[RMDB]
RNA sequence: GGGAACGACUCGAGUAGAGUCGAAAAGAUAUGGAGACUGUGUGGCUAGAAGGGACUCGGAAACGAGUCGACCUUCUUGGACCCACCAGUCUCCUAAGUCAAACGUCGAGAGUUCGCUCUCGACGAAGGAACUGUAUCUGUUCGCAGAUACAGUUCCAAAAGAAACAACAACAACAAC
Reactivity to DMS in 0.01 (KOAc 150mM, MgCl2 10mM, bicine 150mM(pH8.5), 24C), signal-to-noise 3, nucleotides 027 to 126: g000a020u000a300u000g000g020a010g000a040c000u000g000u000g050u000g010g000c110u010a030g020a020a010g000g000g000a030c000u010c000g010g010a090a100a210c010g010a000g020u000c000g000a170c000c000u000u000c000u000u010g030g000a150c300c000c000a010c040c010a030g000u000c000u000c000c000u000a000a030g000u010c060a140a180a300c000g010u000c000g020a030g020a000g030u000u000c280g030c000u000c000u000c000g000a000c010g000a010a040
Structure probing data (DMS) for a 177-nucleotide construct. The RNA was probed in 150 mM KOAc, 10 mM MgCl2 and 150 mM bicine (pH 8.5) at 24 C. Values are in units of 0.01, from 0 to 300, in steps of 10. Source: RMDB library TTRDES, as collected in RNAgym. For DMS, 2,197 sequencing reads were counted.